[RMDB]
Chemical mapping of a 207-nucleotide RNA with 2A3. Values cover nucleotides 27 to 156. The 2A3 profile rests on 904 reads.
RNA sequence: GGGAACGACUCGAGUAGAGUCGAAAAGGAAGGCCCUCAUCGCAGUACACUGGCACACUGGUAAACGUGCCCCGAUGGCUAGGCCGUCCGGGCAGCAUGCCCCGAGCAGCAAACACGCGGCAGACCCUCGUGAGACCCGUCCGGUCACUGAAGAGAGGACACUGUGCAAGUUCGCUUGCACAGUGUCAAAAGAAACAACAACAACAAC
Reactivity to 2A3 in 0.01 (KOAc 150mM, MgCl2 10mM, bicine 150mM(pH8.5), 24C), signal-to-noise 1, nucleotides 027 to 156: g010g020a050a080g050g020c030c040c020u050c070a080u040c010g020c020a000g020u110a050c110a090c150u050g020g000c020a000c030a000c070u150g010g150u120a110a170a060c180g020u070g040c000c010c010c000g010a010u020g030g000c050u100a060g140g000c000c000g000u000c000c000g000g000g010c020a030g020c020a020u160g000c030c000c000c020g020a050g010c050a020g020c010a020a150a000c060a010c120g000c000g020g000c000a000g100a180c000c010c000u020c000g000u070g040a100g030a090c000c000c000g020u030c030c030g020g020u030c030a040c120u060g030a140a020g050a000g010a040g150